[RMDB]
RNA sequence: GGGAACGACUCGAGUAGAGUCGAAAAUAACUUAGUGGACGGCGAAGCGCCCUGUGUGCUUUCUGGGUCCCCGGAUUACGUCCGUGCGCGCAUCUGAGCCUUUCUGGGAAUGUCGUAAUUCUUACAUCGCUUUGUGGCGUUUUCCGAUACCACCACCAAAAGGAUAUACUUUCGAGUAUAUCCUUUUAAAAGAAACAACAACAACAAC
Reactivity to DMS in 0.01 (KOAc 150mM, MgCl2 10mM, bicine 150mM(pH8.5), 24C), signal-to-noise 3, nucleotides 027 to 156: u000a080a100c080u000u000a090g040u010g020g000a100c050g020g010c070g000a090a090g010c030g020c020c030c080u000g020u000g050u000g000c030u000u000u000c050u000g030g020g010u000c030c030c040c000g020g000a060u000u000a030c070g020u010c010c040g010u000g030c070g020c060g020c030a100u000c050u000g010a110g020c030c030u000u000u000c060u010g010g020g010a040a070u000g010u000c170g010u000a100a090u000u010c010u000u040a090c070a080u000c030g000c030u000u000u010g020u020g020g020c000g010u000u000u000u000c020c040g010a130u000a070c020c020a120c020c020a070c100c100
Reactivity to 2A3 in 0.01 (KOAc 150mM, MgCl2 10mM, bicine 150mM(pH8.5), 24C), signal-to-noise 3, nucleotides 027 to 156: u070a010a020c030u060u060a020g000u030g050g020a050c020g020g050c120g040a030a000g030c020g030c040c080c080u090g160u050g010u020g080c040u050u130u080c060u060g060g000g040u050c000c020c010c000g030g000a040u050u070a040c030g010u000c030c010g010u050g010c070g000c000g020c030a040u040c070u130g080a070g040c020c000u260u300u100c180u210g010g020g070a060a040u080g080u110c050g040u060a060a090u130u050c030u030u090a050c020a070u110c040g040c090u120u090u180g060u140g040g000c020g020u010u000u000u000c000c010g000a010u020a050c010c030a020c000c000a020c010c000